[RMDB]
RNA sequence: GGGAACGACUCGAGUAGAGUCGAAAAGUGUGCUAUACUAGUAUGGUUGAAUGAAUCAACCCUUGGUGCUUAGCUUCUUUCACCAAGCAUAUUACACGCGGAUAACCGCCAAAGGAGAAAAGAUGAACUGCCCGACGAUUCUUCGGAAUCGUCGGAAUCAUGUUUCCAGGUUCGCCUGGAAACAUGAAAAAGAAACAACAACAACAAC
Reactivity to DMS in 0.01 (KOAc 150mM, MgCl2 10mM, bicine 150mM(pH8.5), 24C), signal-to-noise 1, nucleotides 027 to 156: g020u000g000u000g000c030u000a110u010a050c030u000a070g010u020a080u000g000g080u010u000g030a060a190u020g010a130a160u010c000a020a060c000c000c040u000u000g010g040u000g030c080u000u010a070g010c000u010u000c020u000u000u000c050a060c020c000a000a120g020c010a050u000a030u000u000a020c030a050c090g000c050g000g030a210u000a110a170c000c010g050c060c060a030a110a120g010g020a140g000a140a140a060a180g020a120u010g010a080a070c070u000g000c090c000c020g020a080c010g010a030u000u010c000u000u000c300g070g000a010a010u000c000g020u010c000g000g000a030a030
Reactivity to 2A3 in 0.01 (KOAc 150mM, MgCl2 10mM, bicine 150mM(pH8.5), 24C), signal-to-noise 3, nucleotides 027 to 156: g060u040g010u010g010c070u060a060u040a300c070u050a050g110u070a110u110g010g030u020u010g010a080a140u190g070a060a080u020c000a010a020c000c000c020u000u000g000g010u020g030c010u040u080a090g010c020u060u030c000u040u070u020c010a000c010c000a020a000g010c020a030u030a020u120u140a040c010a010c050g010c010g010g000a030u050a240a170c040c010g040c070c060a080a060a020g070g010a040g030a020a140a020a000g120a070u180g060a070a080c050u110g060c010c000c000g000a000c010g000a000u000u000c010u020u020c090g100g000a010a000u000c010g000u000c000g010g000a000a010